Source: RMDB library OK2TST, as collected in RNAgym. The record gives the reactivity of an RNA of 177 nucleotides to 2A3 and DMS. Values cover nucleotides 27 to 126.
RNA sequence: GGGAACGACUCGAGUAGAGUCGAAAAACAGAGGAUAGGGAACCACGAGCCGGAUCCGCGCCAUGGGGACGAAGGGCCGCACGGGGAGACGGUCGAGGGCCCUGCGGGCCGCUUCCGCAUAGGCAUGCCUACAUGAUGUGUUCGCACAUCAUGUAGGAAAAGAAACAACAACAACAAC
Reactivity to 2A3 in 0.01 (KOAc 150mM, MgCl2 10mM, bicine 150mM(pH8.5), 24C), signal-to-noise 3, nucleotides 027 to 126: a010c050a020g080a070g060g050a070u130a090g020g000g020a060a120c020c010a010c030g000a030g110c010c020g020g020a020u030c030c030g070c060g020c070c010a100u090g020g000g020g080a020c060g150a170a210g140g150g010c040c010g080c030a030c030g090g000g000g010a050g030a000c020g030g010u030c020g030a040g020g070g010c000c000c000u040g010c050g000g000g060c030c050g010c040u060u020c000c030g040c010a030u050a060g040g010c040a020u120g060
Reactivity to DMS in 0.01 (KOAc 150mM, MgCl2 10mM, bicine 150mM(pH8.5), 24C), signal-to-noise 2, nucleotides 027 to 126: a110c090a110g000a110g020g010a100u000a070g000g000g010a070a070c040c020a110c060g020a100g000c040c010g000g000a110u000c020c020g000c090g000c080c050a040u000g000g000g000g010a060c060g020a120a120g020g010g030c020c010g010c040a070c080g000g010g000g000a050g000a150c020g000g010u010c020g010a040g000g010g010c010c010c020u000g000c090g010g000g000c040c050g000c070u000u000c020c020g030c080a070u010a100g020g020c030a090u010g010